An RNA of 207 nucleotides, treated with 2A3 and read out base by base. 2A3 adducts were read by reverse transcription with SuperScript II with manganese. It was measured as part of the RMDB library OK3TST.

[RMDB]
RNA sequence: GGGAACGACUCGAGUAGAGUCGAAAAUCACUGAAUGCUCAUUAAUUCAAUGUAUGGCCAUAAUCAAGCUCUUCAUAGAAAAGUUCAGUUAUCCUUUUCAUUUUACAUUUUCAGAUGUUCUAUUGCAAUCAUUCAGUACACAAUCAUCUUCCUCCUGCGGUAGUCCAAGUUUCGACUUGGACUACCGAAAAGAAACAACAACAACAAC
Reactivity to 2A3 in 0.01 (KOAc 150mM, MgCl2 10mM, bicine 150mM(pH8.5), 24C), signal-to-noise 3, nucleotides 027 to 156: u080c000a010c010u020g020a020a050u060g010c020u030c110a050u040u130a090a090u210u050c060a010a050u050g050u080a020u090g060g000c030c020a070u060a160a040u100c100a040a030g000c060u040c000u070u040c040a100u050a130g070a020a030a020a010g020u070u140c070a020g020u030u120a130u200c010c020u020u060u070u090c030a060u020u020u020u160a070c040a030u070u050u060u180c040a030g010a080u030g040u030u000c030u110a110u040u210g020c020a010a080u020c010a060u080u050c010a020g060u070a010c130a000c010a060a120u100c040a030u010c050u040u000c020c010u030c010c010u050g030